[RMDB]
RNA sequence: GGGAACGACUCGAGUAGAGUCGAAAACUGCGCUGAGCCCUUCUCCCCCAGCUUGCCUGUGUCCUAGGGAAUUGGAAGGUCAUCCUUCACAGGAUCGUGCGGAAGUCCUGCUCGGGGCGGAAGCAUUAUAAACCUUAGACGUUCGCGUCUAAGGUAACUAACUUAACGAGUUCGCUCGUUAAGUUAGAAAAGAAACAACAACAACAAC
Reactivity to DMS in 0.01 (KOAc 150mM, MgCl2 10mM, bicine 150mM(pH8.5), 24C), signal-to-noise 4, nucleotides 027 to 156: c050u000g010c040g030c010u010g010a140g010c020c010c020u010u010c040u010c020c010c010c010c020a090g000c020u000u020g030c040c040u000g030u000g000u000c030c040u000a090g010g020g020a080a120u010u000g020g010a100a070g020g030u000c070a100u000c020c000u020u000c070a120c110a090g000g010a040u000c060g020u000g030c050g030g010a300a190g000u000c010c010u000g010c120u010c150g030g010g020g000c040g000g000a300a240g020c040a060u000u000a090u010a030a110a080c000c000u010u000a020g000a010c000g030u000u010c300g050c020g030u000c000u000a020a000g020g020u000a000a070
Reactivity to 2A3 in 0.01 (KOAc 150mM, MgCl2 10mM, bicine 150mM(pH8.5), 24C), signal-to-noise 5, nucleotides 027 to 156: c030u070g040c080g020c140u150g050a060g010c010c030c030u190u080c100u130c030c000c000c000c000a010g000c040u050u120g020c000c010u050g010u010g010u100c000c040u060a070g000g040g070a090a110u140u140g070g020a080a030g040g020u150c050a120u120c020c010u020u040c060a020c020a060g060g010a060u130c070g050u040g030c000g010g000a000a020g020u040c000c000u030g060c080u090c150g000g000g000g000c020g010g010a000a010g000c010a000u050u080a040u090a050a120a010c000c000u000u000a000g000a000c000g010u020u050c190g020c010g100u000c000u000a000a000g000g000u000a000a000
This 207-nucleotide RNA was probed chemically with DMS and 2A3. For 2A3, 3,104 sequencing reads were counted. The data come from the RNA Mapping Database (RMDB), library M2RFPK.